[RMDB]
RNA sequence: GGGAACGACUCGAGUAGAGUCGAAAAGAAAACCGCUGUUGGCUAGCGGAAAGAAAGAGGGUUAUAGCCAACGAAAUAAGCCGGAAAGAACAACCGGCACGACAAGCCCUACAAAGUCGUCAGAAAAAGUACGAGUGAUGUUCGCAUCACUCGUACUAAAAGAAACAACAACAACAAC
Reactivity to DMS in 0.01 (KOAc 150mM, MgCl2 10mM, bicine 150mM(pH8.5), 24C), signal-to-noise 1, nucleotides 027 to 126: g000a140a130a160a300c010c010g090c010u000g050u010u000g000g000c040u000a050g010c000g050g000a140a050a060g000a000a090a130g000a020g000g000g000u010u000a070u000a000g030c000c000a000a040c050g000a170a050a110u000a050a090g030c000c000g000g000a130a030a060g040a300a220c200a090a100c000c000g000g000c000a100c080g000a000c020a060a150g000c040c000c000u000a140c160a030a070a160g030u000c050g000u060c030a080g030a010a030a050a100
Reactivity to 2A3 in 0.01 (KOAc 150mM, MgCl2 10mM, bicine 150mM(pH8.5), 24C), signal-to-noise 1, nucleotides 027 to 126: g100a040a040a010a000c000c000g000c000u000g010u000u000g000g000c040u010a000g000c040g030g000a050a000a050g220a020a110a030g000a040g080g000g030u090u060a050u000a070g000c000c030a060a030c010g100a030a040a070u190a130a000g020c000c020g110g100a110a250a050g160a260a000c050a000a000c050c000g000g000c000a000c000g020a000c030a100a060g010c000c000c100u000a000c010a000a030a000g020u000c010g000u000c000a090g090a100a100a040a040